[RMDB]
RNA sequence: GGGAACGACUCGAGUAGAGUCGAAAAUUUACCAGCAGCAGUCAUUAAUUCUUUUGCUAGAGCUGGGUUAUCAUUAUAUAUUUUGCUUUGCUCUGUUAAAUUAAAACUUUUUUCUAACCAAGGAUUACAUACCUGCGAUAUUCGUAUCGCAGGUAUGAAAAGAAACAACAACAACAAC
Reactivity to 2A3 in 0.01 (KOAc 150mM, MgCl2 10mM, bicine 150mM(pH8.5), 24C), signal-to-noise 3, nucleotides 027 to 126: u110u060u060a050c010c010a010g000c100a000g000c000a000g070u150c000a100u000u290a050a160u280u170c140u090u300u160u010g000c020u100a010g010a000g070c070u090g010g070g000u010u160a090u070c010a000u070u250a070u000a070u040a050u180u040u080u070g010c000u050u030u110g000c000u000c000u050g040u030u080a050a140a110u110u210a040a080a080a170c100u100u010u000u030u030u050c060u050a130a140c030c140a120a000g150g000a210u000u140a080
Reactivity to DMS in 0.01 (KOAc 150mM, MgCl2 10mM, bicine 150mM(pH8.5), 24C), signal-to-noise 2, nucleotides 027 to 126: u000u010u020a060c050c000a090g020c090a020g030c060a020g010u010c080a100u070u040a050a070u030u010c050u010u010u000u010g010c100u000a000g010a160g010c000u000g020g000g000u020u010a000u010c050a000u030u020a080u020a100u070a050u000u010u040u000g010c050u010u000u000g010c020u000c000u040g000u010u040a010a060a120u020u020a050a030a150a220c050u000u010u000u000u000u010c030u010a100a130c110c130a040a080g000g000a060u010u010a200
Record summary
Chemical mapping of a 177-nucleotide RNA with 2A3 and DMS. DMS adducts were read by reverse transcription with MarathonRT. The data come from the RNA Mapping Database (RMDB), library OK1LIB. DMS (dimethyl sulfate) methylates the pairing face of unpaired adenines and cytosines. The reactions ran in a buffer of 150 mM KOAc, 10 mM MgCl2 and 150 mM bicine (pH 8.5), at 24 C. 2A3 adducts were read by reverse transcription with SuperScript II with manganese.